RNA sequence: GGGAACGACUCGAGUAGAGUCGAAAAGGGGUCUUUCGUUUGACGCCAUAGAACAUAUACCUACCCACCGCUACCUGAAGCCUCCACGGGUAGCGAGGGUAUAUUCCCUAUGGCCGAGAAAGACGGAGGCACCCAAAGGCUAAGUUCGCUUAGCCAACUGUGAAUAAAUGUUCGCAUUUAUUCACAGAAAAGAAACAACAACAACAAC
Reactivity to DMS in 0.01 (KOAc 150mM, MgCl2 10mM, bicine 150mM(pH8.5), 24C), signal-to-noise 3, nucleotides 027 to 156: g020g010g070g020u000c030u010u000u000c020g020u010u010u010g070a180c210g000c000c010a020u000a030g010a120a120c050a050u000a030u000a020c020c000u000a070c000c020c030a300c020c000g000c010u000a020c000c010u010g010a030a140g000c030c000u000c010c010a300c040g000g000g030u000a010g020c000g000a050g020g000g000u000a000u000a000u000u000c080c080c000u000a080u000g010g030c000c000g000a150g020a040a060a030g000a040c050g010g010a060g080g050c050a150c010c010c000a080a100a120g030g020c000u000a010a030g000u000u010c300g020c000u000u000a030g010c010c010a010a080
Reactivity to 2A3 in 0.01 (KOAc 150mM, MgCl2 10mM, bicine 150mM(pH8.5), 24C), signal-to-noise 5, nucleotides 027 to 156: g060g010g040g020u020c020u010u000u000c040g040u100u190u170g010a000c000g000c000c000a000u000a000g040a090a010c080a020u010a000u000a000c000c010u050a080c100c090c040a040c010c020g000c000u000a000c000c000u040g060a190a040g020c010c000u000c000c000a010c000g000g000g000u000a000g000c000g000a000g000g000g000u000a000u000a000u010u040c030c000c000u000a000u000g020g000c010c000g010a020g000a030a010a000g000a000c010g000g000a000g010g010c000a040c020c000c010a090a100a020g000g000c000u000a010a000g010u050u130c170g070c150u010u010a000g000c000c000a010a030